[RMDB]
RNA sequence: GGGAACGACUCGAGUAGAGUCGAAAACCGCGCAAGGUGCGCGCGGUACGUAUCGAGCAGCGCUCAACUCUGAAAAACAUCAAGACCAUGUGUCUCUAACUGUGCCACUCUGUGGUUCAGGAAACCUCAAGAUACCAUAGUUCGCUAUGGUAUCUUGAAAAGAAACAACAACAACAAC
Reactivity to DMS in 0.01 (KOAc 150mM, MgCl2 10mM, bicine 150mM(pH8.5), 24C), signal-to-noise 2, nucleotides 027 to 126: c000c000g020c020g030c010a170a120g020g020u010g050c150g020c010g000c000g020g060u000a020c140g000u000a050u020c100g020a070g020c080a150g000c080g050c070u010c050a110a120c040u000c030u010g000a070a030a030a060a110c120a050u000c110a060a060g000a050c060c040a110u000g010u000g010u000c020u000c080u020a150a080c010u000g000u000g010c010c000a010c010u020c220u030g010u000g000g010u000u000c020a000g010g010a030a060a080c170c070u010
Reactivity to 2A3 in 0.01 (KOAc 150mM, MgCl2 10mM, bicine 150mM(pH8.5), 24C), signal-to-noise 5, nucleotides 027 to 126: c000c000g000c000g000c030a060a110g170g080u110g080c060g000c000g010c000g010g000u020a050c060g030u050a070u150c060g010a010g000c060a010g070c020g010c100u000c020a020a050c040u030c030u100g060a110a040a020a010a010c020a050u110c080a080a010g010a030c010c020a130u170g080u040g010u030c010u010c010u060a110a090c010u010g000u000g000c010c010a030c010u270c030u090g010u010g000g000u000u010c010a000g000g000a060a030a010c010c030u000
This 177-nucleotide RNA was probed chemically with DMS and 2A3. Reactivities are given for positions 27 through 126. It was measured as part of the RMDB library 15KREP. For DMS, 1,404 sequencing reads were counted. 2A3 adducts were read by reverse transcription with SuperScript II with manganese. For 2A3, 8,144 sequencing reads were counted.